[RMDB]
RNA sequence: GGGAACGACUCGAGUAGAGUCGAAAAGAUAUGGAGGCAGUGAGAGCAACAGCAAGCUCGGGUCGGAAACGACCCUCUUGACAUGCUCCCUGCCUCCUAAGUCAAACAUGACCCUUCGGGGUCAUGACAUAGAGUCGUACUUCGGUACGACUCUAUGAAAAGAAACAACAACAACAAC
Reactivity to DMS in 0.01 (KOAc 150mM, MgCl2 10mM, bicine 150mM(pH8.5), 24C), signal-to-noise 4, nucleotides 027 to 126: g010a020u010a300u010g000g010a030g010g000c000a010g030u010g010a230g030a030g020c010a060a060c280a210g030c000a000a010g010c300u010c300g000g030g020u000c010g000g010a060a060a140c020g010a010c000c010c010u010c010u000u000g010a060c090a300u000g000c000u010c000c000c000u000g000c010c000u010c000c000u000a000a060g000u000c020a150a120a270c020a000u000g000a010c000c000c000u000u010c210g010g000g020g000u010c010a000u000g000a230
Reactivity to 2A3 in 0.01 (KOAc 150mM, MgCl2 10mM, bicine 150mM(pH8.5), 24C), signal-to-noise 3, nucleotides 027 to 126: g010a000u020a030u080g000g000a010g010g000c010a000g020u060g220a300g010a010g240c060a060a240c090a190g090c010a010a040g010c100u180c170g000g000g000u010c000g000g000a030a030a010c000g000a000c010c060c020u000c000u010u010g010a030c040a160u300g000c000u020c010c010c010u000g000c000c000u000c000c000u000a000a000g000u000c000a000a020a020c010a000u010g000a000c040c010c000u010u070c240g030g000g050g000u000c000a000u020g000a010